[RMDB]
RNA sequence: GGGAACGACUCGAGUAGAGUCGAAAAGAUGCUAGCUAGGAUCAGCAGAGCUACAUGCGUACUGCUAGAGGUACGCGAUCAUGUACGAGUGAUCGCCAUGUGAUCGUACGACUAGUGUGCAGCUCUACACACGGGGUAUAUUCGUAUACCCCGUGUGAAAAGAAACAACAACAACAAC
Reactivity to 2A3 in 0.01 (KOAc 150mM, MgCl2 10mM, bicine 150mM(pH8.5), 24C), signal-to-noise 4, nucleotides 027 to 126: g080a010u060g010c030u030a060g000c010u030a010g060g080a150u080c040a010g030c020a010g010a020g020c040u120a110c080a190u280g010c000g070u090a170c010u020g030c000u040a040g010a030g070g080u020a010c030g000c020g020a010u010c000a000u020g030u070a100c050g020a030g040u080g030a090u020c010g030c050c010a030u050g010u010g020a020u040c020g010u030a020c020g060a060c050u020a010g020u000g030u050g040c010a040g000c010u020c020u080a040
Reactivity to DMS in 0.01 (KOAc 150mM, MgCl2 10mM, bicine 150mM(pH8.5), 24C), signal-to-noise 8, nucleotides 027 to 126: g010a080u000g020c000u000a260g030c010u000a050g010g000a140u000c070a060g010c040a030g020a140g010c020u000a070c210a070u020g010c030g030u010a090c030u000g020c050u000a100g000a110g000g010u000a020c020g010c020g010a090u010c020a020u010g010u010a070c050g000a050g010u020g000a120u000c010g020c300c020a020u010g010u000g000a210u000c020g010u000a030c040g000a150c050u000a020g000u000g010u000g010c030a050g010c030u000c040u010a230